[RMDB]
Source: RMDB library 15KLIB, as collected in RNAgym. This 170-nucleotide RNA was probed chemically with DMS and 2A3. Reactivities are given for positions 27 through 129. The DMS profile rests on 36,843 reads. For 2A3, 19,053 sequencing reads were counted. The reactions ran in a buffer of 150 mM KOAc, 10 mM MgCl2 and 150 mM bicine (pH 8.5), at 24 C.
RNA sequence: GGGAACGACUCGAGUAGAGUCGAAAAGUCAACUUGAGCAAACUAAUAUGCAUAGUCCUGAUGUUAUAGUAGGUGACUAUGUCAUUAUUAGUGAAAAAUUGUUUGUGCGUAGUAAGGAAGAAGACGGAACGGAUCUACUUCGGUAGAUCCAAAAGAAACAACAACAACAAC
Reactivity to DMS in 0.01 (KOAc 150mM, MgCl2 10mM, bicine 150mM(pH8.5), 24C), signal-to-noise 8, nucleotides 027 to 129: g030u030c020a090a060c090u010u010g020a130g010c000a050a100a100c010u020a000a000u020a030u030g020c040a020u010a000g020u000c010c020u040g020a160u060g050u050u100a100u060a160g030u020a160g020g040u000g010a060c010u000a000u020g030u080c050a000u030u050a040u020u000a000g030u040g000a020a020a030a040a030u000u000g020u020u020u040g050u060g000c000g000u000a010g020u040a050a040g030g040a000a030g020a050a040g000a000c180g010g010a040a070c090
Reactivity to 2A3 in 0.01 (KOAc 150mM, MgCl2 10mM, bicine 150mM(pH8.5), 24C), signal-to-noise 9, nucleotides 027 to 129: g110u090c040a030a050c050u050u110g030a020g030c020a060a040a060c000u010a000a010u000a000u010g020c000a000u000a000g000u000c000c000u010g040a090u120g190u300u210a200u100a230g080u030a020g000g070u160g050a000c000u000a000u020g030u100c020a000u010u100a000u010u000a000g020u030g020a020a000a000a010a020u090u070g070u060u020u080g040u030g030c040g000u020a010g010u010a080a020g030g010a000a020g000a000a000g020a020c060g020g020a040a030c070